[RMDB]
RNA sequence: GGGAACGACUCGAGUAGAGUCGAAAAAGAGCCGGAUACGUCCGGCUCAACGGGGGAUACGUAUGGUGCCGUCCGCUCCCCCUAUGGCAUAACAAAUGCACCACACACUAGGCUACGGCCUAGUGAAAAAAGGUGUAUGUGUUCGCACAUACACCAAGCAAUGAAAAACGUUCGCGUUUUUCAUUGCAAAAGAAACAACAACAACAAC
Reactivity to 2A3 in 0.01 (KOAc 150mM, MgCl2 10mM, bicine 150mM(pH8.5), 24C), signal-to-noise 2, nucleotides 027 to 156: a000g020a000g000c010c020g000g000a020u040a060c190g060u010c000c000g000g000c010u000c000a000a000c000g010g000g010g010g000a030u030a120c020g060u060a030u130g000g000u010g040c000c020g040u050c040c050g070c030u040c000c010c000c000c010u060a170u220g180g000c090a110u100a210a030c070a080a090a020u140g000c000a000c010c000a000c000a000c010a000c010u000a000g000g000c010u020a020c220g070g000c010c000u000a000g000u000g010a050a000a000a000a000a010g000g000u000g000u000a000u000g010u000g010u010u010c120g040c060a000c000a000u000a000c000a010c000c000a000a000

An RNA of 207 nucleotides, treated with 2A3 and read out base by base. Reactivities are given for positions 27 through 156. For 2A3, 1,838 sequencing reads were counted. 2A3 adducts were read by reverse transcription with SuperScript II with manganese. The data come from the RNA Mapping Database (RMDB), library M2RFPK.